Record summary: Structure probing data (DMS and 2A3) for a 207-nucleotide construct. Conditions: 150 mM KOAc, 10 mM MgCl2 and 150 mM bicine (pH 8.5), 24 C. The data come from the RNA Mapping Database (RMDB), library OK3TST.
RNA sequence: GGGAACGACUCGAGUAGAGUCGAAAACGACGUGGUGUUCGACCUCGUGAACCCCGGCUCGACCCGGUCGACAGCUACCGGCGUCCGCACGAGCCAGAUCAAGGCACCCGUCGCGGGCCAGAAGUUCGCGAUCGGCUUCGAGCUCCGCGACAACGGCUAAUUCAAAGUGUUUCGACACUUUGAAUUAAAAAGAAACAACAACAACAAC
Reactivity to DMS in 0.01 (KOAc 150mM, MgCl2 10mM, bicine 150mM(pH8.5), 24C), signal-to-noise 2, nucleotides 027 to 156: c020g020a060c080g000u000g020g010u010g020u000u000c050g010a070c040c020u000c020g020u000g020a060a170c030c000c040c030g060g020c020u000c010g010a120c300c010c000g000g000u000c000g000a140c070a100g020c060u000a110c020c020g010g010c050g020u000c020c060g010c000a140c010g000a060g050c010c040a140g000a150u000c080a170a200g000g000c050a050c060c000c040g000u000c020g060c000g000g000g000c000c010a170g010a080a070g020u000u000c010g030c030g020a100u000c040g030g000c030u000u010c030g030a110g000c000u000c020c010g010c010g020a050c060a100a060c040g010g020c110
Reactivity to 2A3 in 0.01 (KOAc 150mM, MgCl2 10mM, bicine 150mM(pH8.5), 24C), signal-to-noise 5, nucleotides 027 to 156: c050g060a010c020g010u080g000g020u060g050u200u190c050g090a100c010c010u020c000g010u020g050a090a110c030c000c010c010g020g000c040u020c020g050a100c010c010c030g000g000u000c010g050a150c040a050g040c070u070a030c030c010g040g010c080g070u010c010c050g060c010a030c010g010a000g000c010c020a050g020a150u190c110a080a080g040g000c010a050c030c060c040g020u010c060g000c030g000g000g000c010c020a030g020a070a010g010u170u280c070g000c070g070a090u190c090g040g000c040u040u030c020g000a010g010c020u030c040c010g010c010g010a040c030a070a020c040g040g020c040